[RMDB]
RNA sequence: GGGAACGACUCGAGUAGAGUCGAAAACCAUAAUUGCCAAUGAUGAGCAAUUCGCUAUUGCCGCCUAAAAACGGUUAGCCGGGGCUGCUAGAGCCUUGUUACCAAAGAUAGCCGGCUGGGACUUCGGAAAAGAGGCCAAAGUUCGCUUUGGCCUCAAGUAAACCCAUAAGUUCGCUUAUGGGUUUACAAAAGAAACAACAACAACAAC
Reactivity to DMS in 0.01 (KOAc 150mM, MgCl2 10mM, bicine 150mM(pH8.5), 24C), signal-to-noise 1, nucleotides 027 to 156: c020c010a110u000a040a110u010u000g020c010c020a140a110u000g000a120u000g000a160g020c010a030a080u000u000c090g000c060u010a040u000u000g010c000c000g000c020c020u020a100a090a090a050a050c050g020g020u000u010a040g070c010c020g000g040g000g010c020u000g000c070u000a130g010a040g020c020c000u000u000g020u000u010a160c080c030a040a120a140g000a130u010a060g000c030c160g030g000c050u010g020g000g000a070c050u020u000c050g030g000a090a090a110a270g000a010g020g000c020c020a010a020a020g030u000u000c300g000c000u000u000u000g020g000c010c000u010c000a010a040
The record gives the reactivity of an RNA of 207 nucleotides to DMS. In probing experiments dimethyl sulfate is read out at A N1 and C N3, which are open when not base-paired. The reactions ran in a buffer of 150 mM KOAc, 10 mM MgCl2 and 150 mM bicine (pH 8.5), at 24 C.